[RMDB]
RNA sequence: GGGAACGACUCGAGUAGAGUCGAAAAUUUUUACUCAGUAGAUGCAUUCUUUUCAGGUAAAGAACUUUCUCAAGGAUUUGAAAGCCUUCCCAAAGAAGGGGAAUAAUUGUCCUUUCUGGUUCCAUUCGUCUUUGACUUAUUUCGAUAAGUCAAAGACAAAAGAAACAACAACAACAAC
Reactivity to 2A3 in 0.01 (KOAc 150mM, MgCl2 10mM, bicine 150mM(pH8.5), 24C), signal-to-noise 2, nucleotides 027 to 126: u040u050u000u010u070a040c030u050c070a040g050u060a030g070a020u070g170c020a140u210u030c000u100u110u080u100c040a030g000g040u010a000a000a080g000a020a040c010u040u060u040c010u020c030a000a030g040g000a050u060u050u130g050a050a040a030g000c010c000u010u000c000c020c000a070a070a020g040a000a010g010g010g020g060a000a040u090a070a030u070u060g000u080c000c000u020u060u020c050u080g060g040u050u000c020c010a060u160u200c110
Reactivity to DMS in 0.01 (KOAc 150mM, MgCl2 10mM, bicine 150mM(pH8.5), 24C), signal-to-noise 3, nucleotides 027 to 126: u010u010u000u000u000a030c050u000c040a090g020u010a030g010a030u010g020c160a110u000u000c020u000u000u000u000c130a140g000g020u010a020a030a040g000a050a090c110u010u000u010c020u000c050a030a070g000g000a060u000u000u000g010a110a140a160g010c040c050u000u000c010c020c160a110a110a220g010a030a030g000g010g010g000a040a060u000a070a130u030u010g010u000c010c000u000u010u030c060u000g000g000u000u000c030c030a130u010u010c190